[RMDB]
RNA sequence: GGGAACGACUCGAGUAGAGUCGAAAACAAUAUGCAUAGAACGCUUGUACAUAGUUUAUGCGUAUUAGGAUGCUCGGCUAUGUAUAAGGGAACUUGAGAAUAUUAAGUUCCUGGAGUUCGAGCAUGAGGUAGACGUUCUAUUCGUAGAGCGUCUACCAAAAGAAACAACAACAACAAC
Reactivity to DMS in 0.01 (KOAc 150mM, MgCl2 10mM, bicine 150mM(pH8.5), 24C), signal-to-noise 9, nucleotides 027 to 126: c060a050a010u000a000u000g000c000a010u000a030g020a070a060c110g010c090u010u010g020u010a060c070a040u010a050g010u000u010u010a010u000g000c000g020u000a020u000u010a080g010g010a050u000g010c000u000c040g000g000c010u000a030u010g000u010a050u000a130a100g010g000g010a010a000c000u000u000g000a020g000a140a090u060a070u000u000a010a000g000u000u000c000c000u000g000g010a040g010u010u010c010g000a030g000c000a000u000g010a100
Reactivity to 2A3 in 0.01 (KOAc 150mM, MgCl2 10mM, bicine 150mM(pH8.5), 24C), signal-to-noise 9, nucleotides 027 to 126: c020a000a020u010a010u020g010c010a010u020a070g200a130a020c050g050c120u110u170g080u160a070c070a130u160a040g010u020u030u030a020u020g000c000g010u010a030u010u060a060g140g050a020u020g000c000u000c010g000g000c010u020a030u140g100u060a090u150a150a050g010g000g000a000a000c000u010u020g020a010g040a140a100u170a090u300u040a010a000g000u000u000c000c000u010g030g020a020g010u150u290c010g000a000g000c000a000u030g040a040
Structure probing data (DMS and 2A3) for a 177-nucleotide construct. For DMS the reverse transcriptase was MarathonRT. 2A3 adducts were read by reverse transcription with SuperScript II with manganese. Source: RMDB library OK1LIB, as collected in RNAgym.